[RMDB]
RNA sequence: GGGAACGACUCGAGUAGAGUCGAAAAUUAGGCUCUUUAAUUGGGUUUUUAUUUUACAAUUUCCAUCCUGCCAAAAUAUUUUUAGGUGAUAGUGGGGCUUUAAUGAUUGGAUUUAUCAUCGGAUUCCAAAACAUCUCUCAUUCGUGAGAGAUGUUUUAAAAGAAACAACAACAACAAC
Reactivity to 2A3 in 0.01 (KOAc 150mM, MgCl2 10mM, bicine 150mM(pH8.5), 24C), signal-to-noise 5, nucleotides 027 to 126: u030u030a030g000g000c000u000c040u080u250u180a140a150u220u120g050g010g010u090u040u050u070u100a080u020u100u010u010a090c100a090a080u020u040u030c000c000a040u040c010c010u040g020c010c000a070a030a080a040u130a170u110u190u050u050u200a050g040g000u010g050a090u010a070g050u100g030g060g030g000c000u110u140u180a120a070u120g070a020u030u090g040g010a030u040u140u170a080u050c070a030u060c010g100g050a100u120u000c040c020
Reactivity to DMS in 0.01 (KOAc 150mM, MgCl2 10mM, bicine 150mM(pH8.5), 24C), signal-to-noise 3, nucleotides 027 to 126: u000u000a020g010g000c000u000c020u020u020u050a090a120u050u020g000g010g000u020u010u010u020u000a000u030u010u000u010a100c160a040a110u010u000u010c010c000a060u000c040c040u000g010c040c040a070a080a060a090u030a030u030u020u030u020u020a060g000g010u010g000a050u000a060g010u000g000g020g010g010c050u010u010u010a050a070u020g000a080u020u030g000g000a040u010u010u010a050u010c040a030u000c070g030g010a070u020u030c050c040